The record gives the reactivity of an RNA of 177 nucleotides to DMS. It was measured as part of the RMDB library M2PK50.
[RMDB]
RNA sequence: GGGAACGACUCGAGUAGAGUCGAAAAUGUUUGCAAUUCGUUGCAAACAAACUACCGAGAACGUUGCUCGGUAUAAACAGCGAACCCUUGGAAACAAGGGAUCUAUGGAACGCUUCGGCGUUCCAAAUAUUUAUCGUGCGUUCGCGCACGAUAAAUAAAAAGAAACAACAACAACAAC
Reactivity to DMS in 0.01 (KOAc 150mM, MgCl2 10mM, bicine 150mM(pH8.5), 24C), signal-to-noise 1, nucleotides 027 to 126: u000g010u000u000u000g010c000a010a040u000u010c220g020u000u000g010c000a020a000a000c000a020a050a110c100u000a100c000c000g080a000g000a160a190c140g020u000u010g010c000u010c030g000g010u000a020u000a020a100a110c130a110g000c100g000a090a080c010c000c000u000u000g000g020a180a110a190c000a000a000g030g000g000a000u000c040u000a150u010g010g000a000a000c000g030c020u000u020c150g050g020c000g020u000u000c020c000a000a000a020